[RMDB]
RNA sequence: GGGAACGACUCGAGUAGAGUCGAAAACAUACUAGUUUUCUAGUAUGAGGAUCCUUUUGGAUCCGAACGACGGUAUGUCUCUACCAGCUUUUUUUGCUCCGUCGGGCUCAUCUGCUUUUGGACUUUUGUCCUUGCAGAUGUGUCAAGGUAGGACAGACGUAUAUGCACGAUUCGUCGUGCAUAUACGAAAAGAAACAACAACAACAAC
Reactivity to 2A3 in 0.01 (KOAc 150mM, MgCl2 10mM, bicine 150mM(pH8.5), 24C), signal-to-noise 5, nucleotides 027 to 156: c000a000u000a000c000u000a010g160u180u130u190u280c000u010a010g000u000a000u010g000a050g000g000a010u020c010c000u130u210u130u300g010g000a000u010c000c010g030a110a010c000g000a000c000g000g050u090a070u120g010u030c040u000c000u200a000c000c000a020g020c060u150u180u030u090u050u300u300g010c000u000c000c000g000u010c000g000g000g010c010u010c010a000u000c000u000g000c020u070u160u180u170g000g000a010c010u140u180u180u300g010u000c000c000u030u010g000c000a000g010a000u000g000u010g000u010c020a020a020g010g000u000a000g000g000a010c000a000g070a000